[RMDB]
RNA sequence: GGGAACGACUCGAGUAGAGUCGAAAAGAUAUGGAGCAAGACAUGAGCGAUUGGGUCGGAAACGACCUAGAGCUCAACAGCUUGGCUCCUAAGUCAAAACGGUCGAGAGGUUCGCCUCUCGACCGAAGAAUUGGUUUUCGUUCGCGAAAACCAAUUCAAAAGAAACAACAACAACAAC
Reactivity to DMS in 0.01 (KOAc 150mM, MgCl2 10mM, bicine 150mM(pH8.5), 24C), signal-to-noise 1, nucleotides 027 to 126: g010a120u010a300u010g000g000a000g030c000a000a000g010a040c090a300u010g000a010g010c050g010a280u000u000g010g010g020u000c000g030g000a090a040a140c000g000a000c000c000u000a030g030a290g010c000u000c000a020a040c270a100g050c010u000u000g030g030c000u000c000c010u000a000a040g000u030c010a120a100a150a200c010g000g000u000c000g000a010g020a030g000g030u000u030c300g010c000c010u030c010u000c000g010a000c030c000g000a020a020

Structure probing data (DMS) for a 177-nucleotide construct. Source: RMDB library TTRDEL, as collected in RNAgym. The DMS profile rests on 686 reads.